[RMDB]
RNA sequence: GGGAACGACUCGAGUAGAGUCGAAAAGGAAUCGACAGUAGAGUGUAUCAUGUCAGUAAGCAUGCCGGGGAAUGGUGGUUUACCCCGUUAUCGAAUGAUUACCGACCAAUAAUUGGCGAAACUCGUUAGGCCCGUCCACACUUCGGUGUGGACGGAAUAUACAAGUGAUCUUCGGAUCACUUGUAUAAAAAGAAACAACAACAACAAC
Reactivity to DMS in 0.01 (KOAc 150mM, MgCl2 10mM, bicine 150mM(pH8.5), 24C), signal-to-noise 2, nucleotides 027 to 156: g010g010a100a070u000c010g030a060c000a070g000u000a050g020a130g040u010g020u000a060u000c050a260u000g020u010c010a040g030u010a030a100g000c010a040u000g010c090c040g030g040g020g000a040a120u000g000g010u000g010g000u010u000u000a270c020c010c000c010g020u010u000a050u010c020g000a050a040u000g010a110u010u010a030c010c010g000a010c000c020a080a070u000a070a080u000u000g010g020c010g010a060a080a080c040u000c040g020u000u000a080g020g000c070c000c000g000u000c000c000a000c020a000c000u000u000c300g040g030u010g050u000g000g020a000c000g000g000a020a020
Reactivity to 2A3 in 0.01 (KOAc 150mM, MgCl2 10mM, bicine 150mM(pH8.5), 24C), signal-to-noise 4, nucleotides 027 to 156: g050g010a030a050u070c030g040a030c030a020g080u120a020g040a020g040u060g020u060a070u160c060a040u110g060u090c030a000g090u090a070a000g040c010a000u040g060c030c000g000g000g000g030a020a050u060g030g010u020g010g040u030u040u170a100c010c000c010c000g020u040u070a080u090c050g060a030a040u080g000a020u060u040a080c000c010g030a030c010c010a010a020u170a130a070u070u020g030g000c030g010a050a050a080c060u040c030g040u050u030a050g010g050c000c010c000g000u000c000c000a010c000a000c000u030u090c210g060g000u010g000u030g000g000a000c000g000g000a000a000
Structure probing data (DMS and 2A3) for a 207-nucleotide construct.
Conditions: 150 mM KOAc, 10 mM MgCl2 and 150 mM bicine (pH 8.5), 24 C.